[RMDB]
RNA sequence: GGGAACGACUCGAGUAGAGUCGAAAACGUAAAGGACUUCGGUCCUUUACGAAAAACCGUAGGCGAUGCGUAGGGAGCUGGGUACUUCGAAAGAGGUACAUAGCAUCGAUCUACCAUCGCCUAAACGGAAAAAGAGUGCGUAUUCGUACGCACUCAACUACUUUAGAACGUUCGCGUUCUAAAGUAGAAAAGAAACAACAACAACAAC
Reactivity to DMS in 0.01 (KOAc 150mM, MgCl2 10mM, bicine 150mM(pH8.5), 24C), signal-to-noise 2, nucleotides 027 to 156: c020g050u000a010a050a010g030g000a000c000u000u000c300g050g010u000c000c000u000u010u000a050c000g010a020a040a050a070a080c000c000g020u000a050g010g010c010g000a010u000g020c160g000u000a080g010g010g000a060g010c000u000g010g010g020u000a010c000u010u000c000g010a140a140a270g000a000g010g010u000a000c000a050u000a020g020c000a210u000c110g020a030u010c000u000a010c020c000a010u000c000g030c000c000u000a000a000a020c020g020g010a080a080a100a140a130g020a030g030u000g020c000g060u000a080u000u000c300g050u000a030c000g030c000a000c000u000c010a020a110
This 207-nucleotide RNA was probed chemically with DMS. The DMS profile rests on 4,578 reads. Reactivities are given for positions 27 through 156. It was measured as part of the RMDB library RNAMAK.